[RMDB]
RNA sequence: GGGAACGACUCGAGUAGAGUCGAAAAAGCCGGUCUACGGACCGGCAAAACGUUCAUCUCGUUUUACGGGCCGCAUUAAGAUUGAAGCCAAGGAACGGGGACUUCAGACUACGACUACGGUCUUAGAUUACGCCUCCGAGUUUCGACUCGGAGGCAACCAUCGAUCUAGAUUCGUCUAGAUCGAUGGAAAAGAAACAACAACAACAAC
Reactivity to 2A3 in 0.01 (KOAc 150mM, MgCl2 10mM, bicine 150mM(pH8.5), 24C), signal-to-noise 1, nucleotides 027 to 156: a000g020c010c000g020g080u000c010u000a030c100g100g000a000c000c000g000g050c010a020a010a000a000c000g040u020u000c150a150u170c060u020c020g030u020u020u020u100a060c090g060g000g020c010c010g070c060a090u080u170a270a090g050a060u140u050g000a040a010g040c000c010a020a000g070g040a040a030c040g040g000g000g010a090c000u180u090c070a050g010a080c030u030a070c170g080a030c000u050a010c090g000g000u010c010u030u020a070g030a040u050u220a050c160g000c000c000u000c000c050g000a000g010u030u080u300c200g100a030c000u000c000g000g000a000g000g010c000a000a000
This 207-nucleotide RNA was probed chemically with 2A3. High 2A3 reactivity points to a flexible backbone, as in loops and unpaired stretches. The 2A3 profile rests on 447 reads. Conditions: 150 mM KOAc, 10 mM MgCl2 and 150 mM bicine (pH 8.5), 24 C.